[RMDB]
RNA sequence: GGGAACGACUCGAGUAGAGUCGAAAAAGUCAAGAGUCUUUGGCACCGUUUUUGGUGAGCAGAUUUCUUUUGCCUAUUGAAGGGUGAAAGACAUGAAAAGGACGAUGCAGGUUCGCCUGCAUCGUCCGUAUAAUCGAUUCUUCGGAAUCGAUUAUACAAAAGAAACAACAACAACAAC
Reactivity to 2A3 in 0.01 (KOAc 150mM, MgCl2 10mM, bicine 150mM(pH8.5), 24C), signal-to-noise 3, nucleotides 027 to 126: a000g040u030c040a070a000g070a020g120u030c050u080u120u100g050g040c020a020c030c030g070u030u060u060u170u260g010g000u030g010a030g060c040a010g000a080u030u070u070c000u030u000u000u020g010c010c000u090a150u060u240g140a200a090g030g000g000u000g010a020a000a000g000a020c050a080u230g080a070a030a030a160g000g000a000c000g010a000u000g020c030a000g090g030u050u110c170g050c040c020u000g000c000a000u000c010g010u000c000c000
Reactivity to DMS in 0.01 (KOAc 150mM, MgCl2 10mM, bicine 150mM(pH8.5), 24C), signal-to-noise 3, nucleotides 027 to 126: a110g020u010c050a070a120g010a140g000u010c020u000u000u010g020g010c000a030c020c000g020u000u010u000u010u000g020g020u000g000a100g010c190a090g000a050u000u000u000c010u010u000u000u000g010c000c000u000a140u020u010g010a150a140g000g010g010u000g010a030a020a010g000a050c300a060u010g010a060a040a130a180g010g010a010c000g010a010u000g010c000a000g010g010u000u010c250g010c000c010u000g000c000a010u000c010g000u000c000c000